[RMDB]
RNA sequence: GGGAACGACUCGAGUAGAGUCGAAAAGCCGAGACCACGCUGGGCCGGGUGAUGUUCAACGAGCUGCUGCCGCUGGGUUAUCCGUUCGUCAACAAGCAGAUGCACAAGAAGGUGCAGGCCGCCAUCACGGACAACAAUAAUUCGUUAUUGUUGUCCGAAAAGAAACAACAACAACAAC
Reactivity to DMS in 0.01 (KOAc 150mM, MgCl2 10mM, bicine 150mM(pH8.5), 24C), signal-to-noise 5, nucleotides 027 to 126: g020c020c010g000a160g000a100c040c020a070c110g000c040u000g000g010g020c040c040g020g010g010u000g010a070u000g020u000u010c090a060a070c080g010a110g020c020u000g010c050u010g010c030c030g030c070u000g000g000g000u000u000a060u000c050c040g010u010u000c070g000u010c080a060a080c100a050a080g010c050a040g000a070u010g000c030a040c040a080a110g020a080a080g020g010u000g010c020a070g020g020c030c020g010c040c030a050u010c110a190
Reactivity to 2A3 in 0.01 (KOAc 150mM, MgCl2 10mM, bicine 150mM(pH8.5), 24C), signal-to-noise 4, nucleotides 027 to 126: g020c000c000g020a020g020a030c020c050a030c060g070c030u070g010g040g000c000c040g050g010g010u060g020a070u100g040u110u120c050a060a020c050g030a020g000c030u060g000c030u040g020c030c010g050c050u070g030g000g020u060u070a040u030c020c010g020u040u070c030g080u040c030a060a050c010a110a010g000c030a020g020a150u070g010c010a020c000a050a120g180a090a030g110g010u010g010c010a010g040g040c010c010g000c010c000a070u110c030a030